[RMDB]
RNA sequence: GGGAACGACUCGAGUAGAGUCGAAAAUACUCGCGGGGGCGGAGUCGUGCAACUGAACCUGGUCAACAGGCGCGCGGUGGCUUUUAUGCCGAAGGUUAGCGGGGACUCCGGAUGGGCCGUCGGGCGCUCUAGCGUUCAUGUUCGCAUGAACGCUAGAAAAAGAAACAACAACAACAAC
Reactivity to 2A3 in 0.01 (KOAc 150mM, MgCl2 10mM, bicine 150mM(pH8.5), 24C), signal-to-noise 3, nucleotides 027 to 126: u120a020c020u010c040g050c040g010g030g000g020g000c010g000g000a030g030u050c050g020u040g050c050a100a030c020u060g020a070a050c000c000u010g040g070u200c040a090a060c030a150g020g020c000g000c000g000c020g030g000u030g010g000c000u140u190u110u060a150u300g100c010c020g010a030a040g070g010u090u200a050g030c030g030g000g000g040a040c000u010c010c000g000g010a020u050g000g000g000c010c020g020u060c000g010g060g000c030g000c010
Reactivity to DMS in 0.01 (KOAc 150mM, MgCl2 10mM, bicine 150mM(pH8.5), 24C), signal-to-noise 2, nucleotides 027 to 126: u030a060c040u020c020g040c070g000g000g000g010g030c000g000g010a060g000u020c030g000u030g020c060a060a090c040u000g000a140a180c020c020u010g030g000u000c120a080a190c100a090g010g000c110g000c080g020c030g020g030u020g000g010c000u000u020u060u010a030u040g040c030c000g000a080a100g000g010u000u000a100g030c040g000g000g010g000a070c020u000c030c030g000g000a030u010g000g000g000c000c040g000u030c020g010g010g000c070g010c040